Source information:
The record gives the reactivity of an RNA of 177 nucleotides to DMS and 2A3. Reactivities are given for positions 27 through 126.
[RMDB]
RNA sequence: GGGAACGACUCGAGUAGAGUCGAAAAGGGGCGGGACCCAGGCGCGGAGCGGCAGCUCCUCCGAGCCAAUAGGCUGUGAGCGCUGACCAGCUCUCCGCCUAUUGGAGCAUUCGCCACCGGCGCCACGCACCCCGUGUAUGUUCGCAUACACGGGGUGAAAAGAAACAACAACAACAAC
Reactivity to DMS in 0.01 (KOAc 150mM, MgCl2 10mM, bicine 150mM(pH8.5), 24C), signal-to-noise 2, nucleotides 027 to 126: g000g000g030g000c070g000g000g000a190c020c030c070a100g030g020c020g040c190g000g010a100g010c060g000g010c180a050g020c030u010c060c060u010c060c070g020a130g020c010c030a040a020u010a050g010g010c010u000g020u000g000a040g020c240g000c030u000g010a120c170c120a110g010c000u000c000u000c080c060g000c000c010u010a030u010u000g000g000a070g030c080a130u000u000c070g000c030c020a070c020c000g010g030c020g000c020c040a090c210g010
Reactivity to 2A3 in 0.01 (KOAc 150mM, MgCl2 10mM, bicine 150mM(pH8.5), 24C), signal-to-noise 1, nucleotides 027 to 126: g000g000g010g030c040g010g070g020a060c010c000c010a030g000g000c030g010c050g010g010a030g110c040g080g000c040a000g010c010u010c000c000u010c030c030g090a020g000c000c000a020a060u070a060g000g010c020u020g070u110g040a000g020c030g020c100u050g180a230c050c030a020g000c010u000c010u020c010c000g000c010c000u020a040u000u030g000g010a050g020c040a090u170u170c050g040c000c000a050c000c020g100g030c020g000c000c020a070c010g050